The record gives the reactivity of an RNA of 177 nucleotides to DMS and 2A3.
[RMDB]
RNA sequence: GGGAACGACUCGAGUAGAGUCGAAAACUUCGUGAACCAGCGACGAUGCAUUAGGUCCUUCGUUAUCUAACCGAAACAUCGUUACUAGUGUUUGAAUAAAUCAAGAUAGGCAGGCUAUCAUAGAAAGAAGUAGUGUGUGAUUCGUCGCACGCUGCUUAAAAGAAACAACAACAACAAC
Reactivity to DMS in 0.01 (KOAc 150mM, MgCl2 10mM, bicine 150mM(pH8.5), 24C), signal-to-noise 9, nucleotides 027 to 126: c050u010u010c050g010u010g000a040a030c010c020a020g000c030g010a010c000g000a010u000g000c030a020u020u010a170g000g010u000c100c090u030u020c150g010u020u040a080u020c110u020a110a030c020c010g000a200a120a140c020a000u000c010g020u000u000a130c020u010a050g020u030g000u000u000u010g000a090a070u030a060a070a090u030c080a090a080g010a030u000a010g000g010c140a090g010g010c020u000a020u000c020a100u030a080g000a060a080a080g010
Reactivity to 2A3 in 0.01 (KOAc 150mM, MgCl2 10mM, bicine 150mM(pH8.5), 24C), signal-to-noise 8, nucleotides 027 to 126: c000u040u020c010g060u050g020a010a010c000c000a000g000c000g010a000c000g000a000u000g000c010a010u030u050a010g000g010u020c010c020u100u120c070g110u040u110a110u050c060u050a020a030c000c000g000a010a000a000c000a000u000c000g000u000u000a010c010u020a020g050u010g040u080u020u040g050a040a040u090a050a050a040u130c040a010a010g000a010u010a000g020g060c040a000g040g000c000u000a000u000c010a010u020a020g070a010a090a000g050
The DMS profile rests on 92,394 reads. The RNA was probed in 150 mM KOAc, 10 mM MgCl2 and 150 mM bicine (pH 8.5) at 24 C. It was measured as part of the RMDB library OK1LIB.